Chemical mapping of a 177-nucleotide RNA with 2A3 and DMS. Reactivities are given for positions 27 through 126. For 2A3 the reverse transcriptase was SuperScript II with manganese. The DMS profile rests on 7,370 reads.
[RMDB]
RNA sequence: GGGAACGACUCGAGUAGAGUCGAAAAGAUAUGGAUUAGAACUACCCAUUGGUUAGCGACGAAGUCGGAAACGACAGAGCUAACUGAUGGGCUAAUCCUAAGUCAAACCUAAUGUUCGCAUUAGGAACGUGUAAAUAUCGUUCGCGAUAUUUACACGAAAAGAAACAACAACAACAAC
Reactivity to 2A3 in 0.01 (KOAc 150mM, MgCl2 10mM, bicine 150mM(pH8.5), 24C), signal-to-noise 7, nucleotides 027 to 126: g030a000u070a040u150g010g000a010u010u010a000g020a090a040c110u150a100c280c000c000a000u000u010g010g000u000u010a010g000c020g300a300c050g050a300a030g010u020c010g000g060a090a070a040c000g000a000c000a020g050a000g000c010u000a000a000c000u000g000a000u000g000g000g000c000u000a000a000u000c000c000u010a080a010g050u010c030a080a050a160c000c000u010a010a020u020g060u050u100c300g000c160a010u020u010a010g030g030a050a060
Reactivity to DMS in 0.01 (KOAc 150mM, MgCl2 10mM, bicine 150mM(pH8.5), 24C), signal-to-noise 6, nucleotides 027 to 126: g010a020u010a300u000g000g000a000u000u000a000g000a070a050c080u020a300c020c010c000a000u000u000g000g010u000u000a000g000c000g000a130c230g000a070a110g000u010c000g000g000a070a050a170c000g010a000c000a030g000a160g000c000u000a000a000c000u000g000a010u000g020g000g000c000u000a000a000u000c000c000u000a040a120g000u000c030a110a100a210c000c000u000a010a010u010g000u010u010c210g020c010a020u000u000a020g000g010a090a120